[RMDB]
RNA sequence: GGGAACGACUCGAGUAGAGUCGAAAACAUUCUUCAAAAAGUGAUGUAGAUUUAUAGCCCAUAACUUUUUUGAAUUACAUCGACGAUACGGCGUCGAAAGAAAAAUAAAUAGACCGUAUGAAAGAAAAAAACAACAGUAGCUUCGGCUACUGUUGAACCAUUAUGUCAGCUUCGGCUGACAUAAUGGAAAAGAAACAACAACAACAAC
Reactivity to 2A3 in 0.01 (KOAc 150mM, MgCl2 10mM, bicine 150mM(pH8.5), 24C), signal-to-noise 1, nucleotides 027 to 156: c010a070u030u010c010u010u000c000a000a000a000a020a000g050u040g010a030u030g040u220a170g060a160u180u260u130a200u190a120g020c060c020c000a020u050a090a040c030u060u050u100u000u060u180g060a050a020u120u120a050c010a030u020c000g000a000c000g000a000u000a020c000g000g000c000g010u000c000g060a000a020a000g020a000a080a000a040a000u120a030a100a100u040a020g090a020c000c000g000u020a010u010g070a050a130a050g030a010a150a030a010a000a000a000c000a000a000c000a010g000u000a000g010c020u000u080c250g110g000c000u000a000c000u000g000u000u000g000a020a010